[RMDB]
RNA sequence: GGGAACGACUCGAGUAGAGUCGAAAACUUACCCCAUGCAAAGUCUGCAUGCAGGCAGGGUAUUGUGCCGCGGGGCACAACUGGUCGAGAGCUGGGCUGCUCUCCUGAUGAGCCCAUGGCAGGGCGAGUACGUAUGCUUCUUCGGAAGCAUACGUACAAAAGAAACAACAACAACAAC
Reactivity to DMS in 0.01 (KOAc 150mM, MgCl2 10mM, bicine 150mM(pH8.5), 24C), signal-to-noise 2, nucleotides 027 to 126: c080u020u010a110c070c010c040c050a070u020g000c010a050a070a120g020u000c130u000g020c020a060u000g020c070a090g000g030c100a050g000g000g030u000a080u000u030g040u000g050c010c020g020c300g000g000g000g040c000a030c030a010a050c130u000g020g000u000c040g000a020g000a060g010c020u000g000g000g070c090u000g040c010u010c020u000c010c010u000g000a110u000g000a160g000c000c000c010a090u000g010g010c100a060g010g000g020c010g020a140
Reactivity to 2A3 in 0.01 (KOAc 150mM, MgCl2 10mM, bicine 150mM(pH8.5), 24C), signal-to-noise 2, nucleotides 027 to 126: c020u100u180a090c000c000c000c020a040u060g010c020a060a100a150g160u100c120u080g000c020a030u040g010c060a000g050g030c010a020g000g050g020u100a070u080u080g010u010g000c000c020g080c100g120g090g100g000c020a010c020a030a090c020u080g030g010u100c070g050a010g010a010g140c070u080g020g240g000c010u040g030c010u000c010u050c000c010u120g040a140u060g020a030g010c050c000c010a040u080g050g000c070a030g000g010g040c020g000a050